[RMDB]
About this RNA: An RNA of 177 nucleotides, treated with 2A3 and DMS and read out base by base. For DMS the reverse transcriptase was MarathonRT. The reactions ran in a buffer of 150 mM KOAc, 10 mM MgCl2 and 150 mM bicine (pH 8.5), at 24 C. Values are in units of 0.01, from 0 to 300, in steps of 10.
RNA sequence: GGGAACGACUCGAGUAGAGUCGAAAAGAUAUGGAGCUCCACAUUCGACGAAGGUGGGAAUAAUGAAUCAUAUAUUCGGAAACGAAUAUAUGAUUCUAUCCCACCAGAGAAUGGGAGCUCCUAAGUCGAUAAUUGGGUAGUUCGCUACCCAAUUAUCAAAAGAAACAACAACAACAAC
Reactivity to 2A3 in 0.01 (KOAc 150mM, MgCl2 10mM, bicine 150mM(pH8.5), 24C), signal-to-noise 3, nucleotides 027 to 126: g020a020u100a070u130g020g000a020g010c020u070c010c010a300c020a300u050u060c050g270a300c050g020a300a040g020g030u030g000g020g160a010a010u300a190a300u300g020a010a000u010c000a000u020a000u000a000u010u010c000g030g000a090a030a040c000g020a000a000u010a000u000a000u010g000a000u000u000c000u010a000u010c010c000c000a000c010c000a000g010a000g020a010a000u000g020g000g000a020g000c010u010c000c000u000a000a000g000u000c050
Reactivity to DMS in 0.01 (KOAc 150mM, MgCl2 10mM, bicine 150mM(pH8.5), 24C), signal-to-noise 3, nucleotides 027 to 126: g000a040u000a210u010g000g010a040g030c010u010c010c000a140c020a010u000u000c000g000a230c290g020a120a100g020g020u000g000g000g010a070a100u000a130a130u010g020a020a010u000c000a000u000a010u000a000u000u000c000g020g010a080a080a110c000g010a010a000u000a000u000a000u000g000a010u000u000c000u000a070u000c000c000c000a010c000c000a010g010a030g000a020a010u000g010g000g000a010g010c000u000c000c000u000a000a070g000u000c060
The 2A3 profile rests on 2,787 reads. Values cover nucleotides 27 to 126. The DMS profile rests on 4,100 reads.